[RMDB]
RNA sequence: GGGAACGACUCGAGUAGAGUCGAAAAUGAAACGAAGGCGGGACGGAGAAGGCUAUGUUGGCCGGGCGACGGUUGUCCCGGUUUAAGCGUGUAGGCUGGUUUUCCAGGCAAAUCCGGAGAAAAAAAACAGCCAUUUAAUGUUCGCAUUAAAUGGCUGAAAAGAAACAACAACAACAAC
Reactivity to DMS in 0.01 (KOAc 150mM, MgCl2 10mM, bicine 150mM(pH8.5), 24C), signal-to-noise 1, nucleotides 027 to 126: u000g010a020a030a120c060g010a100a110g020g000c040g010g000g010a070c050g000g020a090g010a080a080g010g020c070u000a110u000g050u000u010g000g030c000c020g000g000g000c300g010a070c120g000g000u000u000g000u010c010c010c000g000g020u000u000u010a070a030g010c100g000u010g000u000a070g020g000c030u010g010g040u010u000u020u000c030c000a180g000g000c040a040a040a110u010c010c020g000g030a190g010a020a000a000a040a030a040a050a150